[RMDB]
RNA sequence: GGGAACGACUCGAGUAGAGUCGAAAACAUCAAGGACUCAUCCUCGGAUUCCUCGAUGAUUCCUUCGAUCAAGGCGCCGCGCGCCUCCUCGAUUCGCUCGGUGUCCGACUCGGCCGGGGUUCGUGUCCGAUUAAACUCUAUUCGUAGAGUUUAAUCGAAAAGAAACAACAACAACAAC
Reactivity to 2A3 in 0.01 (KOAc 150mM, MgCl2 10mM, bicine 150mM(pH8.5), 24C), signal-to-noise 9, nucleotides 027 to 126: c040a010u020c010a000a010g010g000a010c010u000c020a020u040c030c060u100c120g170g070a300u220u200c030c020u040c060g010a010u010g000a010u010u020c000c000u030u040c110g010a030u040c070a060a040g010g000c010g020c050c100g130c050g000c010g000c040c020u030c010c030u060c030g040a080u060u020c010g000c020u010c010g030g040u100g020u050c010c010g010a020c010u010c010g040g010c020c020g020g020g040g000u050u080c040g020u050g080u060c020
Reactivity to DMS in 0.01 (KOAc 150mM, MgCl2 10mM, bicine 150mM(pH8.5), 24C), signal-to-noise 9, nucleotides 027 to 126: c160a030u000c020a030a020g000g000a030c190u000c020a030u000c030c060u000c200g010g010a180u010u000c020c010u000c300g000a020u010g000a060u000u000c010c010u000u000c120g010a030u000c150a110a090g010g010c030g020c020c100g010c200g010c020g010c100c060u000c090c080u000c090g010a060u000u000c020g010c020u000c020g000g010u000g000u000c020c010g000a190c030u000c010g010g010c020c020g000g000g010g010u000u000c030g020u000g010u000c050